An RNA of 177 nucleotides, treated with DMS and 2A3 and read out base by base. The reactions ran in a buffer of 150 mM KOAc, 10 mM MgCl2 and 150 mM bicine (pH 8.5), at 24 C. It was measured as part of the RMDB library OK1LIB. For DMS the reverse transcriptase was MarathonRT. Values cover nucleotides 27 to 126.
RNA sequence: GGGAACGACUCGAGUAGAGUCGAAAAGAAUAAAAGGCGAUAGAGUGAAAACUCUAGAACUCUCUCGACGCCGAAACUACGAAAAACCUCACGAUAGUAGUGGAGAGAGGAAAAGAUUGUGAGGAAAGGGAACUAACAUGUUCGCAUGUUAGUUCCCAAAAGAAACAACAACAACAAC
Reactivity to DMS in 0.01 (KOAc 150mM, MgCl2 10mM, bicine 150mM(pH8.5), 24C), signal-to-noise 1, nucleotides 027 to 126: g020a230a070u100a030a130a110a140g000g090c000g050a300u000a010g000a030g000u000g030a100a070a110a000c000u050c000u000a050g010a120a120c000u000c000u000c000u000c020g000a190c020g000c000c000g000a000a080a000c000u000a050c110g000a100a120a060a020a060c010c000u000c030a000c010g010a050u000a080g020u000a000g000u000g000g000a010g000a000g020a000g000g000a220a060a000a080g040a070u000u020g000u000g000a020g000g050a160a080a110
Reactivity to 2A3 in 0.01 (KOAc 150mM, MgCl2 10mM, bicine 150mM(pH8.5), 24C), signal-to-noise 2, nucleotides 027 to 126: g010a040a030u240a120a120a020a020g000g020c040g010a040u030a060g030a000g020u010g110a050a000a000a100c000u000c000u000a000g010a010a000c000u000c010u000c040u060c040g170a120c030g010c000c000g000a000a000a000c010u030a010c000g020a020a030a000a040a040c000c000u020c000a000c000g020a000u000a000g000u000a000g000u000g000g000a000g000a020g010a000g140g040a000a190a000a020g130a080u220u150g020u000g010a000g020g000a000a030a080